[RMDB]
RNA sequence: GGGAACGACUCGAGUAGAGUCGAAAAGUGCAGAAGACAAAGAUGGGUAAGGCUAUGCGUGCUGUGUCUGUAGAUAGUGAUGCUGCUCAGCUGAUGGGAAUCAAUGUCAAUCGGACAAUCAGCUUCAUGAAAAUUUUACGUUCGCGUAAAAUUUUCAAAAAGAAACAACAACAACAAC
Reactivity to DMS in 0.01 (KOAc 150mM, MgCl2 10mM, bicine 150mM(pH8.5), 24C), signal-to-noise 3, nucleotides 027 to 126: g020u030g010c020a060g000a090a030g020a050c070a040a060a070g020a070u030g000g000g020u010a060a040g000g010c000u010a070u010g010c030g000u020g010c030u000g000u020g000u000c010u030g020u020a140g010a080u010a060g030u000g010a060u020g010c050u010g000c070u000c090a050g030c050u020g000a090u000g000g000g000a120a090u020c090a050a090u020g010u030c020a060a100u020c070g000g000a040c060a070a090u020c010a020g000c030u010u010c110a170
Reactivity to 2A3 in 0.01 (KOAc 150mM, MgCl2 10mM, bicine 150mM(pH8.5), 24C), signal-to-noise 4, nucleotides 027 to 126: g090u080g010c040a000g050a130a000g060a080c100a110a110a020g070a090u200g020g040g040u080a080a020g070g040c040u070a050u110g040c000g070u050g000c000u030g020u010g000u000c000u010g020u020a020g020a090u050a020g090u040g030a050u020g030c050u020g020c000u010c060a040g000c070u160g050a070u050g000g040g050a030a060u100c080a040a030u110g010u040c020a010a100u120c030g020g000a000c010a000a050u090c000a020g000c000u080u050c050a060